Conditions: 150 mM KOAc, 10 mM MgCl2 and 150 mM bicine (pH 8.5), 24 C. This 177-nucleotide RNA was probed chemically with DMS and 2A3. The 2A3 profile rests on 30,918 reads. The data come from the RNA Mapping Database (RMDB), library TTRDEL.

RNA sequence: GGGAACGACUCGAGUAGAGUCGAAAAGAUAUGGAAGGAUGGGAGUCGUCAGGUUCGGAAACGAACCUAACGACAUCGAUCAUCUUCCUAAGUCAAACUAAGCUAAUACUUCGGUAUUAGCUUAGAACUAAUACAUUCAGUUCGCUGAAUGUAUUAGAAAAGAAACAACAACAACAAC
Reactivity to DMS in 0.01 (KOAc 150mM, MgCl2 10mM, bicine 150mM(pH8.5), 24C), signal-to-noise 9, nucleotides 027 to 126: g010a040u000a300u010g010g010a010a000g010g010a020u000g000g020g000a030g020u000c000g010u000c030a010g000g000u000u000c000g010g000a100a060a180c000g010a000a000c000c000u000a000a000c000g010a010c030a030u000c030g000a080u000c010a080u010c000u000u000c000c000u000a060a160g010u000c030a090a120a270c000u000a000a000g000c000u000a000a010u000a010c000u000u010c200g030g000u000a000u000u000a000g000c000u000u000a000g000a060a240
Reactivity to 2A3 in 0.01 (KOAc 150mM, MgCl2 10mM, bicine 150mM(pH8.5), 24C), signal-to-noise 6, nucleotides 027 to 126: g020a020u090a030u130g010g010a000a030g140g050a010u040g080g060g000a040g010u020c010g000u000c020a010g000g010u000u010c000g010g030a060a060a050c010g000a000a000c000c010u000a010a000c000g010a000c010a080u040c010g040a070u050c010a060u010c000u010u020c010c000u040a160a030g070u040c050a030a070a110c020u000a000a000g000c000u000a000a000u000a010c010u030u090c300g120g000u010a000u000u010a000g000c000u000u000a000g000a000a000